[RMDB]
RNA sequence: GGGAACGACUCGAGUAGAGUCGAAAAAAGAGAACAAAAGUAAGUAUUUUAUCACACCUACCUGACUAGAAUUCAGGAUAAGUAAGUUCUUCAUAAGAGAACAUUUCCAUUACGAAUUCAGUCGCAAUCCCAAGGUUACGUUCGCGUAACCUUGGGAAAAAGAAACAACAACAACAAC
Reactivity to DMS in 0.01 (KOAc 150mM, MgCl2 10mM, bicine 150mM(pH8.5), 24C), signal-to-noise 1, nucleotides 027 to 126: a000a150g000a000g040a110a150c130a040a090a000a010g030u000a080a070g030u000a070u000u000u000u000a120u000c030a200c060a180c080c000u000a270c020c080u000g000a010c000u000a150g000a070a000u000u000c000a080g000g020a000u020a000a070g000u000a250a100g020u000u000c000u000u000c070a050u000a300a300g000a000g000a000a010c100a170u020u000u080c000c000a070u050u050a110c110g030a000a000u000u120c070a000g000u000c020g000c150a180a000
Reactivity to 2A3 in 0.01 (KOAc 150mM, MgCl2 10mM, bicine 150mM(pH8.5), 24C), signal-to-noise 1, nucleotides 027 to 126: a000a000g170a000g000a000a010c200a000a090a020a000g060u050a040a000g020u040a190u100u010u000u090a220u130c010a030c050a000c090c000u060a060c040c040u020g000a000c000u070a110g000a010a000u000u000c000a000g090g020a060u010a090a000g130u020a130a130g000u000u000c000u000u000c040a050u060a140a030g030a010g000a020a000c040a040u000u000u000c000c030a030u120u100a110c180g000a000a000u000u000c000a000g010u000c020g030c000a000a040